[RMDB]
RNA sequence: GGGAACGACUCGAGUAGAGUCGAAAAUAAGGGUGUAAACAAUAAAGAUGGUGAUAAAAACAAUGUCUAAGACGGACAUAGCGACUCCUUUUCUUGAAAAUUGUACUAUUCACUAGCAUUAUCGUCGUCGCAGCCUAAUAUUCGUAUUAGGCUGCGAAAAAGAAACAACAACAACAAC
Reactivity to DMS in 0.01 (KOAc 150mM, MgCl2 10mM, bicine 150mM(pH8.5), 24C), signal-to-noise 1, nucleotides 027 to 126: u010a090a100g000g000g020u020g000u000a150a170a080c130a030a050u000a020a030a080g010a080u010g010g010u010g010a030u040a050a080a130a080a020c060a010a010u000g000u000c070u040a000a160g030a110c300g000g000a010c030a060u000a120g030c130g000a050c110u020c000c010u000u000u000u000c000u010u010g000a060a010a050a050u010u000g030u000a060c110u000a050u010u000c030a000c000u000a080g010c040a020u000u000a030u000c050g000u020c120g000
Reactivity to 2A3 in 0.01 (KOAc 150mM, MgCl2 10mM, bicine 150mM(pH8.5), 24C), signal-to-noise 1, nucleotides 027 to 126: u130a050a100g040g090g050u030g030u060a090a180a020c120a130a050u150a150a080a040g040a040u040g040g070u000g020a000u020a060a070a000a000a000c000a000a020u030g000u070c030u070a040a070g000a050c100g030g000a000c050a020u120a120g020c020g070a060c070u030c010c010u050u160u060u000c010u000u000g100a040a040a120a000u090u030g060u040a050c030u000a100u080u060c010a000c030u040a030g000c010a040u120u040a020u210c000g040u030c020g080
Structure probing data (DMS and 2A3) for a 177-nucleotide construct. As a SHAPE reagent, 2A3 marks flexible, mostly unpaired nucleotides at the ribose 2'-OH. The data come from the RNA Mapping Database (RMDB), library OK2TST.